[RMDB]
RNA sequence: GGGAACGACUCGAGUAGAGUCGAAAACAGGCGCGUCGGCCGCAAAGGAAGCUCCCGUGGACGCGCCGCCUUCCGCUCGCGGCACCGUAUCUCGAAUACUUUCUCGUUGCGGGGAGCCUAGGCGCGGUCUACUGAGGGGGUUCGCUCCUUCGGUAGAAAAAGAAACAACAACAACAAC
Reactivity to 2A3 in 0.01 (KOAc 150mM, MgCl2 10mM, bicine 150mM(pH8.5), 24C), signal-to-noise 9, nucleotides 027 to 126: c060a010g020g010c000g000c000g020u030c030g090g060c040c020g010c080a140a120a040g100g030a080a040g030c040u040c020c010c010g030u090g080g000a000c000g000c000g000c010c000g000c000c000u110u030c010c010g020c030u060c050g040c020g010g000c000a010c010c010g020u040a060u080c100u040c050g040a090a040u130a260c020u090u160u060c080u020c030g040u020u030g000c010g000g010g020g130a040g000c000c010u070a080g040g000c030g000c010g020g010
Reactivity to DMS in 0.01 (KOAc 150mM, MgCl2 10mM, bicine 150mM(pH8.5), 24C), signal-to-noise 9, nucleotides 027 to 126: c140a090g000g010c010g020c020g010u000c020g020g020c030c020g010c080a080a080a090g000g010a090a090g010c090u000c010c010c010g010u010g000g010a020c010g010c040g010c010c010g010c100c020u010u010c030c050g000c060u010c070g000c080g010g010c020a100c070c050g010u000a020u020c060u020c100g010a090a060u020a090c140u020u010u020c060u000c050g010u010u010g010c030g000g000g000g000a070g010c030c050u020a120g000g010c060g010c010g000g000